[RMDB]
RNA sequence: GGGAACGACUCGAGUAGAGUCGAAAAUGGCCUUCCGGAGGUCUCUCUCGAGCUCCUCUGCCUUUCUUCUUGUGGAGAUCCACUUUUCGAGGAUUUCUUCCCUUCCUCCCCUCCGGCCCUUCCUCGAUACGAUGCUUCUUCGGAAGCAUCAAAAGAAACAACAACAACAAC
Reactivity to 2A3 in 0.01 (KOAc 150mM, MgCl2 10mM, bicine 150mM(pH8.5), 24C), signal-to-noise 9, nucleotides 027 to 129: u120g040g010c010c000u050u040c070c050g040g010a020g020g040u010c000u000c000u000c010u000c050g000a010g020c020u030c010c000u020c030u040g050c010c020u050u080u050c010u050u020c020u080u210g050u070g020g010a060g020a060u050c020c000a060c040u080u110u070u100c080g030a050g030g010a030u090u040u020c020u020u030c000c000c000u030u040c000c000u020c010c000c000c010u010c000c000g010g000c000c000c000u020u020c000c010u030c010g010a030u030a150c100
Reactivity to DMS in 0.01 (KOAc 150mM, MgCl2 10mM, bicine 150mM(pH8.5), 24C), signal-to-noise 6, nucleotides 027 to 129: u080g020g020c040c060u010u000c070c080g000g040a100g020g000u020c030u030c020u020c050u000c060g040a040g000c050u000c030c020u030c050u000g020c000c040u000u020u030c020u000u000c060u010u020g000u030g030g000a080g020a160u040c010c020a100c050u030u030u030u070c080g020a100g020g010a110u000u030u030c020u010u010c000c000c040u000u020c000c000u020c050c030c010c020u020c020c060g020g000c000c000c000u000u000c000c030u000c080g020a110u000a090c140
The data come from the RNA Mapping Database (RMDB), library 15KLIB. An RNA of 170 nucleotides, treated with 2A3 and DMS and read out base by base. The DMS profile rests on 49,206 reads. For 2A3 the reverse transcriptase was SuperScript II with manganese.